[RMDB]
RNA sequence: GGGAACGACUCGAGUAGAGUCGAAAAGAGAGGGUAACCACCGGCGCGCGUCACUGCUAUAUCCACCGGGGGGUAAGGGGAGAAAAGGAUACAGCGCGACGAAGUUAGCACGCUGCCCCGUAAGGCUUGAAGAGUGUAGUGUUCGCACUACACUCAAGAUUAAUGAGAUCUUCGGAUCUCAUUAAUCAAAAGAAACAACAACAACAAC
Reactivity to 2A3 in 0.01 (KOAc 150mM, MgCl2 10mM, bicine 150mM(pH8.5), 24C), signal-to-noise 5, nucleotides 027 to 156: g080a000g010a030g010g040g030u070a070a050c020c010a070c090c020g030g000c020g000c010g000c010g070u040c050a010c070u070g020c000u050a020u010a010u180c030c050a060c060c070g000g010g020g010g000g040u100a080a080g030g010g030g010a030g030a030a090a010a040g020g000a010u030a090c040a020g010c020g000c000g020a010c030g000a070a040g050u060u080a030g080c020a010c100g040c020u070g000c000c020c000c000g010u040a040a050g020g040c050u110u110g070a120a060g010a040g000u000g000u000a000g000u000g010u010u040c100g030c030a010c000u000a000c010a000c000u000c000a000a000
Reactivity to DMS in 0.01 (KOAc 150mM, MgCl2 10mM, bicine 150mM(pH8.5), 24C), signal-to-noise 2, nucleotides 027 to 156: g020a110g000a120g010g030g030u000a040a060c030c070a080c040c000g030g000c020g020c040g040c040g000u020c070a050c080u030g030c030u000a100u000a090u010c010c020a140c080c030g030g000g010g020g010g020u010a030a060g010g010g030g020a160g000a050a060a100a050g000g000a190u000a060c000a010g000c000g010c010g000a130c050g030a120a100g020u000u010a090g030c030a070c020g030c010u000g010c000c000c000c050g040u000a050a090g030g000c050u000u010g000a130a180g010a030g020u000g000u000a010g030u000g020u000u000c250g030c020a010c000u000a010c000a020c010u000c000a010a050